[RMDB]
Structure probing data (DMS and 2A3) for a 177-nucleotide construct. 2A3 adducts were read by reverse transcription with SuperScript II with manganese. For DMS, 764 sequencing reads were counted.
RNA sequence: GGGAACGACUCGAGUAGAGUCGAAAACUAUUUGAAUCACUAUCUAUGUUAAUCAUUAUUGUUUAAAAGAUAGUAAGUGACAGAACAACGAAUUGUUUCUGUAACUACUUUUUAAGCAGGGAAAUAAUCAACUACGAUCUUUCGAGAUCGUAGUUGAAAAAGAAACAACAACAACAAC
Reactivity to DMS in 0.01 (KOAc 150mM, MgCl2 10mM, bicine 150mM(pH8.5), 24C), signal-to-noise 1, nucleotides 027 to 126: c020u010a070u010u000u000g010a170a170u000c100a010c010u010a070u000c040u010a070u020g000u000u000a080a040u000c010a040u000u020a120u000u000g000u010u000u000a010a000a030a010g000a130u010a000g020u010a070a050g000u010g000a060c040a010g000a060a050c030a020a100c300g000a160a080u000u000g010u000u000u000c000u000g010u010a110a080c020u000a000c010u000u000u000u000u000a020a080g010c020a000g070g010g000a070a100a060u010a130a100
Reactivity to 2A3 in 0.01 (KOAc 150mM, MgCl2 10mM, bicine 150mM(pH8.5), 24C), signal-to-noise 1, nucleotides 027 to 126: c000u070a090u080u200u200g180a120a040u060c040a060c060u080a060u100c050u080a150u170g060u090u100a110a010u050c020a040u040u290a090u300u130g000u010u040u000a020a000a000a000g080a150u080a040g030u020a120a150g050u010g030a000c000a040g040a000a040c000a020a040c170g190a190a200u100u020g070u010u260u030c000u000g000u000a040a010c010u010a020c010u020u060u020u040u130a020a000g000c000a000g000g070g100a050a210a090u170a100a050